Structure probing data (2A3 and DMS) for a 207-nucleotide construct. For 2A3 the reverse transcriptase was SuperScript II with manganese.
RNA sequence: GGGAACGACUCGAGUAGAGUCGAAAAUCGAGUGUGAGUGAUCGUGUGAACGUGUGAGUGAACGUACGAGAACGAACGUGUGUUCUCGUUCGUGAGAGAUCUCUCUCGUGUGUGAUCACACGUUCGUGUACGAACGAACGUUCGAGUGUGAACACUCACGACUAGCCUCAUUCGUGAGGCUAGUCGUAAAAGAAACAACAACAACAAC
Reactivity to 2A3 in 0.01 (KOAc 150mM, MgCl2 10mM, bicine 150mM(pH8.5), 24C), signal-to-noise 3, nucleotides 027 to 156: u060c030g010a020g010u030g000u010g000a030g010u040g040a140u040c010g010u050g040u040g100a020a010c010g000u010g030u060g080a130g040u150g080a080a030c010g010u020a000c010g010a030g060a170a010c010g010a030a030c050g020u020g010u010g010u070u050c030u000c010g000u030u020c010g000u050g000a020g000a010g010a160u080c190u020c010u000c000u000c230g020u020g010u020g010u050g070a050u030c000a000c010a000c020g000u000u000c010g010u010g000u020a010c000g000a040a010c000g010a020a010c020g000u000u000c000g000a030g020u110g010u030g030a060a010c050a010c030u040c020
Reactivity to DMS in 0.01 (KOAc 150mM, MgCl2 10mM, bicine 150mM(pH8.5), 24C), signal-to-noise 1, nucleotides 027 to 156: u000c010g010a100g070u020g040u010g010a180g040u000g000a090u010c000g040u020g010u000g000a070a010c010g060u000g000u020g000a140g000u000g010a090a090c020g020u000a030c050g000a080g000a120a070c040g000a050a090c110g020u000g020u020g020u000u020c000u000c030g010u000u000c020g070u000g000a070g000a110g000a210u010c180u000c050u000c010u000c020g040u050g030u000g010u000g000a040u000c000a020c030a030c020g020u000u000c000g060u000g020u000a030c070g000a070a080c030g000a150a050c030g020u000u000c000g010a110g000u010g030u000g000a100a070c000a020c030u010c020

Source: RMDB library OK3TST, as collected in RNAgym. The reactions ran in a buffer of 150 mM KOAc, 10 mM MgCl2 and 150 mM bicine (pH 8.5), at 24 C.